[RMDB]
RNA sequence: GGGAACGACUCGAGUAGAGUCGAAAACAGAUGAACGUGAACUUGGACGAGGGAGUUCUGUACAUUUCUAGAUUCCUUUUUGGACUUUGGGUCCGACUUCUCAGCCGGUGAAGAGAUUAUGCCCUUAGUGAGAUAGGUCAUUCGUGACCUAUCUCACAAAAGAAACAACAACAACAAC
Reactivity to 2A3 in 0.01 (KOAc 150mM, MgCl2 10mM, bicine 150mM(pH8.5), 24C), signal-to-noise 3, nucleotides 027 to 126: c040a000g040a040u040g040a080a020c080g090u030g030a010a010c030u050u100g050g150a020c050g020a080g040g090g000a040g000u050u000c010u010g040u050a020c000a080u090u100u050c040u040a060g050a270u030u080c000c000u070u070u030u110u200g050g000a040c030u100u050u100g170g060g010u030c010c020g030a050c020u110u030c040u030c020a080g010c010c030g070g030u060g010a040a040g030a000g020a070u090u080a070u200g060c000c000c000u000u000a000
Reactivity to DMS in 0.01 (KOAc 150mM, MgCl2 10mM, bicine 150mM(pH8.5), 24C), signal-to-noise 2, nucleotides 027 to 126: c160a070g010a020u010g010a100a050c060g010u000g020a040a050c020u010u010g010g050a070c070g020a100g010g000g010a060g000u000u000c030u010g000u000a050c060a040u000u010u010c050u000a090g020a200u010u000c000c010u000u010u000u000u010g010g010a060c060u010u010u000g050g030g020u010c010c020g000a060c110u000u000c020u000c060a090g020c040c010g020g000u010g010a070a080g000a090g000a070u010u010a090u000g000c000c000c000u020u000a140